[RMDB]
RNA sequence: GGGAACGACUCGAGUAGAGUCGAAAAGAGAGCUAGGAACCGUAGAGGUGUUCUCAAGGGAAUCCUUUGCAGUGACGUCCUCGUAAGUGGACUAUAACAGUAGAACUCGUAUUAGUAGCCUAAUACUUCAUCGUUAAGUAUUCGUACUUAACGAUGAAAAAGAAACAACAACAACAAC
Reactivity to DMS in 0.01 (KOAc 150mM, MgCl2 10mM, bicine 150mM(pH8.5), 24C), signal-to-noise 5, nucleotides 027 to 126: g000a060g020a050g010c020u000a060g010g010a140a050c050c040g040u000a070g000a040g000g010u010g010u010u000c010u000c050a100a160g010g010g000a050a060u010c010c010u000u000u000g020c030a050g010u010g000a250c180g000u000c010c000u000c020g020u040a110a130g010u000g000g020a040c020u000a070u010a140a130c150a050g020u000a070g000a060a100c050u010c040g010u000a040u010u000a040g000u010a110g010c160c010u000a020a020u010a040c080u010
Reactivity to 2A3 in 0.01 (KOAc 150mM, MgCl2 10mM, bicine 150mM(pH8.5), 24C), signal-to-noise 9, nucleotides 027 to 126: g060a000g000a000g000c040u070a030g040g070a090a100c020c010g020u050a010g010a020g060g030u110g070u210u020c020u010c010a050a090g070g000g020a040a090u030c000c000u020u030u060g010c030a020g020u010g050a020c040g020u020c000c010u020c030g050u090a150a070g020u030g030g010a010c010u010a010u040a220a070c050a030g110u080a020g040a080a030c020u010c090g010u030a040u030u040a040g100u050a040g020c010c010u030a050a020u030a070c040u010